Record summary: Structure probing data (2A3) for a 207-nucleotide construct. Reactivities are given for positions 27 through 156.
[RMDB]
RNA sequence: GGGAACGACUCGAGUAGAGUCGAAAACUGCCGCCGGGACGCAGUGAUCCUCGCAGGGUCGCACGGUCGCAUCGGGUCGGCCUCGUGUCGGCUCGACCUGCGAGGGGAGCGAGUGGCGAGCCCGACCAAAACUUUCUCGCCUUCGGGCGAGAAAGAAGACCUGUAUUUUCUUCGGAAAAUACAGGUCAAAAGAAACAACAACAACAAC
Reactivity to 2A3 in 0.01 (KOAc 150mM, MgCl2 10mM, bicine 150mM(pH8.5), 24C), signal-to-noise 2, nucleotides 027 to 156: c010u040g000c000c000g010c000c000g040g040g060a050c050g030c040a140g170u000g010a010u000c000c000u000c000g010c000a010g080g030g090u210c060g020c080a130c120g020g020u040c010g030c040a070u050c030g000g010g000u010c000g000g020c000c000u100c150g290u300g010u020c020g000g040c020u040c000g060a120c010c010u000g000c000g000a000g000g010g000g000a010g020c020g020a080g090u070g010g000c010g010a080g010c050c010c020g020a010c000c000a000a140a000a050c000u010u000u000c000u000c000g010c000c030u040u080c160g080g000g000c000g000a010g000a000a000a000g000a010a000

It was measured as part of the RMDB library M2RFPK.
For 2A3, 1,285 sequencing reads were counted.
2A3 is a SHAPE reagent: it acylates the 2'-hydroxyl of flexible nucleotides of all four kinds.